[RMDB]
RNA sequence: GGGAACGACUCGAGUAGAGUCGAAAAGGUGCAACGCCCUGUAAAGUAAACGAUGACCCAUAGUGAACUUCGCGGUAAAAUACGUAUCAAAUUGAAAAAUUGCUGCUGACCUGGAACUUUGCUUCCGCAAAGAAAACAGCUUCGGCUGUUUUCUUUGAAAAGAAACAACAACAACAAC
Reactivity to DMS in 0.01 (KOAc 150mM, MgCl2 10mM, bicine 150mM(pH8.5), 24C), signal-to-noise 1, nucleotides 027 to 126: g040g020u000g030c120a120a120c120g000c030c000c010u000g010u000a090a070a100g040u010a020a110a090c120g000a120u000g000a100c070c000c040a090u000a190g020u000g000a060a080c010u000u000c020g040c030g000g000u010a060a040a050a070u000a030c070g000u010a040u010c050a050a050a130u000u020g000a000a040a110a080a120u020u000g010c040u000g010c090u000g020a050c080c050u010g000g020a030a050c090u000u000u010g020c090u000u000c030c030g030
The record gives the reactivity of an RNA of 177 nucleotides to DMS.
For DMS, 657 sequencing reads were counted.
It was measured as part of the RMDB library RFMREP.
For DMS the reverse transcriptase was MarathonRT.